[RMDB]
Source: RMDB library M2RFPK, as collected in RNAgym. Chemical mapping of a 207-nucleotide RNA with 2A3. The 2A3 profile rests on 600 reads. The RNA was probed in 150 mM KOAc, 10 mM MgCl2 and 150 mM bicine (pH 8.5) at 24 C.
RNA sequence: GGGAACGACUCGAGUAGAGUCGAAAACUUAACCGGUUUUAACGCUGUUUUAUUGGCGCAAAGGUUUACGGAUAAACAACUAAUAAUUAAACCUUUUGUGUGCGAAACGUGGUUGUUUAACGUACUCACUGCCCCCAGGGAUUCGUCCCUGGGGGAAUGUUACGGAGGUAUUCGUACCUCCGUAACAAAAAGAAACAACAACAACAAC
Reactivity to 2A3 in 0.01 (KOAc 150mM, MgCl2 10mM, bicine 150mM(pH8.5), 24C), signal-to-noise 2, nucleotides 027 to 156: c100u160u190a070a040c020c010g130g010u030u000u020u090a030a020c010g010c030u020g080u080u210u100u120a130u070u220g060g000c020g000c040a030a030a070g000g000u000u020u000a050c030g010g010a070u150a110a130a000c020a090a000c100u150a020a140u100a200a040u200u050a040a110a030c010c000u110u130u180u150g150u050g000u000g020c090g000a090a050a000c050g010u020g030g000u040u020g030u020u030u060a080a060c020g010u000a030c020u010c050a090c040u100g000c000c010c010c000c000a010g060g000g000a020u030u020c110g060u000c000c020c000u000g030g000g000g000g020a000a000